[RMDB]
RNA sequence: GGGAACGACUCGAGUAGAGUCGAAAAAGGUCCAUAGCUCUCACGUUUCUCGCAGUUGGAGGAGUCCUGCUCUUCCUCUCCGUGAACGUGCACGCUGAUACUGGGUGUGCCAUAGACAUCAGCCGGCAAGAGCUGAGAUGUGGGAGUGGAGUGUUCACCACGUAUCGAAUUUCGAUUCGAUACGUGGAAAAGAAACAACAACAACAAC
Reactivity to 2A3 in 0.01 (KOAc 150mM, MgCl2 10mM, bicine 150mM(pH8.5), 24C), signal-to-noise 3, nucleotides 027 to 156: a010g040g040u030c010c000a050u100a040g000c000u000c010u000c000a000c020g000u010u140u080c040u010c010g000c020a050g030u220u050g010g000a010g000g010a000g020u100c090c180u300g120c000u010c000u020u010c000c000u000c000u010c030c000g000u010g050a020a010c020g000u030g030c010a010c050g020c000u020g030a100u100a300c160u230g060g000g010u040g020u010g000c000c000a060u070a040g120a050c070a160u050c000a010g030c020c010g030g080c160a190a050g030a030g020c010u010g030a000g000a030u090g010u030g010g020g000a050g000u050g020g020a120g040u140g020u040u010c020a010
Reactivity to DMS in 0.01 (KOAc 150mM, MgCl2 10mM, bicine 150mM(pH8.5), 24C), signal-to-noise 1, nucleotides 027 to 156: a060g010g020u020c020c000a130u020a150g020c010u000c010u000c020a010c040g030u000u000u000c020u010c020g050c090a060g000u010u010g000g000a040g000g000a060g000u000c200c210u000g030c010u000c020u020u010c020c000u000c000u020c060c020g040u010g020a080a060c040g030u010g010c040a030c070g000c020u000g020a210u020a070c110u000g000g010g080u000g040u000g000c000c130a120u000a120g020a170c040a110u000c020a050g020c020c020g030g000c100a080a070g030a100g050c020u000g010a060g020a030u000g020u000g020g030g010a130g050u000g010g010a160g050u000g000u000u000c000a300